Chemical mapping of a 207-nucleotide RNA with 2A3. The reactions ran in a buffer of 150 mM KOAc, 10 mM MgCl2 and 150 mM bicine (pH 8.5), at 24 C. 2A3 adducts were read by reverse transcription with SuperScript II with manganese. For 2A3, 538 sequencing reads were counted.
[RMDB]
RNA sequence: GGGAACGACUCGAGUAGAGUCGAAAAAGGUUAUUUCGAUAACCUAAAAAGAUAUGGAAUAUCUCCCCACCUCCUGAACUACAGAAUGUAGUCGGAAACGACUACUUUCUGCAGGAGAGGAUAUUCCUAAGUCAAAAAAGCAGCAUUCGUGCUGCAAGUUUAGAUGUCCCUUCGGGGACAUCUAAACAAAAGAAACAACAACAACAAC
Reactivity to 2A3 in 0.01 (KOAc 150mM, MgCl2 10mM, bicine 150mM(pH8.5), 24C), signal-to-noise 1, nucleotides 027 to 156: a000g070g010u050u000a020u030u110u240c100g050a020u000a010a010c060c000u100a080a040a050a110a000g160a120u240a110u170g000g000a020a000u010a010u000c020u090c010c020c030c010a010c000c000u000c000c020u030g010a050a060c110u030a030c280a000g000a000a000u020g030u010a010g000u000c000g000g040a070a020a070c030g020a000c000u000a000c000u000u000u000c000u000g060c000a000g000g000a000g000a000g000g000a000u000a000u000u020c000c000u010a090a010g080u160c100a010a100a110a110a080a010g060c000a000g030c000a020u040u060c130g070u070g020c010u040g020c000a000a000